[RMDB]
Overview
This 177-nucleotide RNA was probed chemically with DMS.
RNA sequence: GGGAACGACUCGAGUAGAGUCGAAAAGAUAUGGACGUACUACCCACCGCAUAGCCCUAAUGGUCGACGAAGCAGCUCGGAAACGAGCUGCAGAGACCAUUAGGGCGUGCGAGGUACGUCCUAAGUCCAUACCUCGACAGUUCGCUGUCGAGGUAUGAAAAGAAACAACAACAACAAC
Reactivity to DMS in 0.01 (KOAc 150mM, MgCl2 10mM, bicine 150mM(pH8.5), 24C), signal-to-noise 1, nucleotides 027 to 126: g010a090u060a140u000g000g010a030c000g010u000a010c010u020a130c000c020c030a300c160c010g000c000a020u000a180g010c020c000c000u000a000a010u000g000g000u010c000g030a270c270g030a120a070g000c000a010g000c010u010c000g000g000a050a160a200c000g040a020g050c000u010g010c000a000g020a100g000a040c000c000a020u000u000a030g000g030g000c000g000u000g000c000g000a040g000g000u000a010c010g010u000c020c020u010a010a080g000u000c130

Description: The DMS profile rests on 1,136 reads. The RNA was probed in 150 mM KOAc, 10 mM MgCl2 and 150 mM bicine (pH 8.5) at 24 C. Source: RMDB library TTRINS, as collected in RNAgym.